[RMDB]
Overview: Chemical mapping of a 207-nucleotide RNA with DMS and 2A3. The reactions ran in a buffer of 150 mM KOAc, 10 mM MgCl2 and 150 mM bicine (pH 8.5), at 24 C. The 2A3 profile rests on 1,336 reads. In probing experiments dimethyl sulfate is read out at A N1 and C N3, which are open when not base-paired.

RNA sequence: GGGAACGACUCGAGUAGAGUCGAAAAAAUUAGAGGCCAUUUGAAAUAAUUUAAAUUAGCUCAACCCUACUGCACUUACCGAACUAGAUAACGGUGUAGUAGGGGUAAAUUCUCCGCAUUCGGUGCGCAACCACCUGAGGUUUCGACCUCAGGUGAACAUAAUGAAAGGGUUCGCCCUUUCAUUAUGAAAAGAAACAACAACAACAAC
Reactivity to DMS in 0.01 (KOAc 150mM, MgCl2 10mM, bicine 150mM(pH8.5), 24C), signal-to-noise 1, nucleotides 027 to 156: a060a090u000u010a070g000a280g020g030c010c040a050u010u000u000g000a070a130a170u000a180a100u000u010u000a020a030a100u010u000a010g000c040u010c040a040a090c010c000c010u000a010c010u010g000c000a000c000u000u010a040c040c000g020a040a170c150u020a140g000a090u000a050a090c180g000g080u000g040u000a010g020u000a020g010g010g000g000u000a010a040a140u000u000c010u000c050c070g050c070a080u000u010c090g000g020u000g030c000g000c110a090a160c080c010a000c000c000u000g010a020g010g000u000u000u000c300g030a060c000c000u000c000a000g000g000u000g010a010a130
Reactivity to 2A3 in 0.01 (KOAc 150mM, MgCl2 10mM, bicine 150mM(pH8.5), 24C), signal-to-noise 2, nucleotides 027 to 156: a010a010u200u120a090g000a060g040g070c020c000a000u010u030u030g100a120a130a120u150a120a110u110u130u160a060a070a040u070u120a010g040c010u040c020a020a020c000c020c000u010a000c000u000g010c010a010c000u020u070a010c070c050g060a090a040c020u010a110g080a180u050a240a040c090g010g000u000g000u000a000g000u000a000g010g000g000g000u000a000a000a000u050u000c020u010c020c000g000c010a010u070u040c060g100g010u040g000c020g000c040a060a040c030c000a000c000c020u020g000a000g010g010u070u110u170c180g060a090c000c000u000c000a000g000g000u000g000a010a010